Chemical mapping of a 207-nucleotide RNA with 2A3. 2A3 adducts were read by reverse transcription with SuperScript II with manganese. The 2A3 profile rests on 1,292 reads.

[RMDB]
RNA sequence: GGGAACGACUCGAGUAGAGUCGAAAAGUGGCCAGAGAACGAAUACGGAAAGCUCCAGGACUUUUCGAACAACAUCCUGGAAAAUUCGCAGUCCAUCCUGGGAGAAGGUACCCAUUCUCUUGACUUUGUUGACAACGUCCUCUCCAACAUCAACAAGAUAUUUCAGCUCUUUCGAGAGCUGAAAUAUAAAAGAAACAACAACAACAAC
Reactivity to 2A3 in 0.01 (KOAc 150mM, MgCl2 10mM, bicine 150mM(pH8.5), 24C), signal-to-noise 1, nucleotides 027 to 156: g060u040g010g030c030c020a020g030a020g000a140a000c060g050a180a120u160a170c050g060g090a050a060a020g030c010u000c000c020a020g000g020a040c020u030u040u060u120c170g060a040a010c030a020a020c020a060u040c000c010u050g020g000a010a030a000a070u080u080c070g000c060a030g060u060c020c010a050u040c020c020u040g010g000g010a050g010a030a040g030g020u090a130c000c020c030a040u100u020c000u010c040u040u060g030a070c040u060u060u060g000u020u070g060a020c070a120a040c130g040u030c000c040u020c020u000c020c040a010a060c010a090u070c000a000a070c030a090a020g030